Notes: This 177-nucleotide RNA was probed chemically with DMS and 2A3. The DMS profile rests on 9,676 reads. 2A3 adducts were read by reverse transcription with SuperScript II with manganese. Conditions: 150 mM KOAc, 10 mM MgCl2 and 150 mM bicine (pH 8.5), 24 C. The 2A3 profile rests on 5,452 reads. Reactivities are rounded to 0.1 and cut off at 0 and 3.
[RMDB]
RNA sequence: GGGAACGACUCGAGUAGAGUCGAAAACGUCCAAUUAUAUCUUCAUGUCCUGUGUUGUCCACUCCGAUUUUAGCAUUUAGAUCUCCCAUCAGGAUGGUGAGGUCCUUUCUUGGACACUUCGCUAUGACAUCAGUAAUGGGUUCGCCCAUUACUGAUGAAAAGAAACAACAACAACAAC
Reactivity to DMS in 0.01 (KOAc 150mM, MgCl2 10mM, bicine 150mM(pH8.5), 24C), signal-to-noise 4, nucleotides 027 to 126: c140g010u010c010c030a080a060u030u020a050u020a040u010c040u020u010c040a050u020g020u000c000c020u010g000u010g020u010u020g000u010c060c010a040c050u010c020c030g020a090u010u010u010u000a080g040c100a100u010u030u030a070g000a070u020c080u000c010c000c000a120u010c060a120g000g000a050u000g020g040u000g020a060g000g000u010c060c010u020u020u020c090u010u000g020g020a050c020a100c050u000u000c030g030c030u000a040u020g000a300
Reactivity to 2A3 in 0.01 (KOAc 150mM, MgCl2 10mM, bicine 150mM(pH8.5), 24C), signal-to-noise 7, nucleotides 027 to 126: c060g080u070c000c000a030a010u260u090a110u080a050u120c050u070u030c030a080u060g030u090c000c000u070g010u010g050u150u120g020u050c020c000a010c040u030c020c020g040a090u010u020u080u230a080g010c040a060u060u070u030a060g010a080u030c040u000c050c020c010a050u100c030a050g180g030a070u090g040g050u070g000a010g020g020u040c010c010u090u230u090c050u070u050g010g000a010c020a050c050u070u090c020g010c060u040a050u190g010a050